The record gives the reactivity of an RNA of 177 nucleotides to 2A3 and DMS. For DMS the reverse transcriptase was MarathonRT. 2A3 adducts were read by reverse transcription with SuperScript II with manganese. The reactions ran in a buffer of 150 mM KOAc, 10 mM MgCl2 and 150 mM bicine (pH 8.5), at 24 C.

[RMDB]
RNA sequence: GGGAACGACUCGAGUAGAGUCGAAAAGGCGUCUUCGCUGCCUCGGCCGCCGUGCACUGACCGGUAGCCGCCGUAAUAGCGGCAUUGUUCCCAUAAAAGGAUGUGGGUGUGGGUGUCGAAGUAGCAGCCCUAUGACGGAGUUCGCUCCGUCAUAGGGAAAAGAAACAACAACAACAAC
Reactivity to 2A3 in 0.01 (KOAc 150mM, MgCl2 10mM, bicine 150mM(pH8.5), 24C), signal-to-noise 1, nucleotides 027 to 126: g080g020c040g050u030c060u120u110c090g000c010u020g000c000c000u000c010g040g020c020c020g000c020c010g100u070g030c050a030c100u110g150a090c030c020g010g000u030a030g020c020c010g000c000c000g010u040a050a090u080a100g010c010g000g000c000a010u020u170g020u070u000c000c010c000a000u110a010a140a000a010g110g040a110u090g000u100g210g000g000u050g000u050g020g020g020u030g000u010c000g000a030a020g020u060a020g000c020a030g050
Reactivity to DMS in 0.01 (KOAc 150mM, MgCl2 10mM, bicine 150mM(pH8.5), 24C), signal-to-noise 2, nucleotides 027 to 126: g020g020c100g000u010c100u000u020c100g020c060u000g020c020c020u000c060g010g030c020c040g020c000c000g000u020g010c040a090c090u010g020a070c040c020g010g000u020a150g000c010c000g010c000c050g000u000a160a080u020a060g000c030g010g020c010a120u010u020g020u020u000c000c000c010a140u020a040a050a080a170g000g000a120u010g010u000g000g010g010u000g020u000g010g010g000u000g020u010c020g000a010a070g000u000a090g010c030a180g010